The data come from the RNA Mapping Database (RMDB), library RSTRND. Chemical mapping of a 207-nucleotide RNA with 2A3 and DMS. In probing experiments dimethyl sulfate is read out at A N1 and C N3, which are open when not base-paired.
[RMDB]
RNA sequence: GGGAACGACUCGAGUAGAGUCGAAAAGAUCCAAUUUUAACUGGCGAAAAUAACUACGCUCUCGCUGCUUAAUCGAAGCACAGUAGAUUGAAGCUUAAUCCUUACACAAGGUGUUUGGACGAGACAUCACCCGGAAGCCGUGGCUUCGAGGCAAUCCGCACAGUAUAAUCUUCGGAUUAUACUGUGCAAAAGAAACAACAACAACAAC
Reactivity to 2A3 in 0.01 (KOAc 150mM, MgCl2 10mM, bicine 150mM(pH8.5), 24C), signal-to-noise 3, nucleotides 027 to 156: g080a030u050c040c050a080a060u200u160u050u100a090a040c030u050g030g010c020g060a070a060a050a070u110a090a050c080u100a030c110g030c050u020c020u020c030g040c050u020g000c020u010u060a010a010u020c010g010a030a000g030c060a010c050a180g040u020a030g010a050u040u100g100a020a000g000c000u000u020a020a020u030c000c000u000u080a010c010a000c030a060a120g160g010u030g010u000u040u000g000g010a010c030g010a000g020a040c020a060u080c030a020c050c020c020g040g040a010a010g000c010c010g020u030g030g000c000u000u020c030g000a010g010g000c000a010a060u050c020c050
Reactivity to DMS in 0.01 (KOAc 150mM, MgCl2 10mM, bicine 150mM(pH8.5), 24C), signal-to-noise 1, nucleotides 027 to 156: g010a180u000c010c020a080a100u020u000u000u000a050a110c100u000g010g000c020g000a100a080a060a090u000a090a080c060u000a080c060g000c020u000c060u010c060g080c060u010g000c010u000u000a100a130u000c010g020a130a180g000c030a070c060a030g020u000a100g010a060u010u020g010a100a070g020c020u000u010a140a020u000c030c030u000u000a020c030a070c090a090a060g020g020u010g050u000u000u000g020g020a140c020g000a100g000a070c050a060u000c070a100c000c010c000g000g000a080a080g010c020c020g050u000g020g020c060u000u000c020g020a060g010g000c060a020a050u000c020c120
The reactions ran in a buffer of 150 mM KOAc, 10 mM MgCl2 and 150 mM bicine (pH 8.5), at 24 C.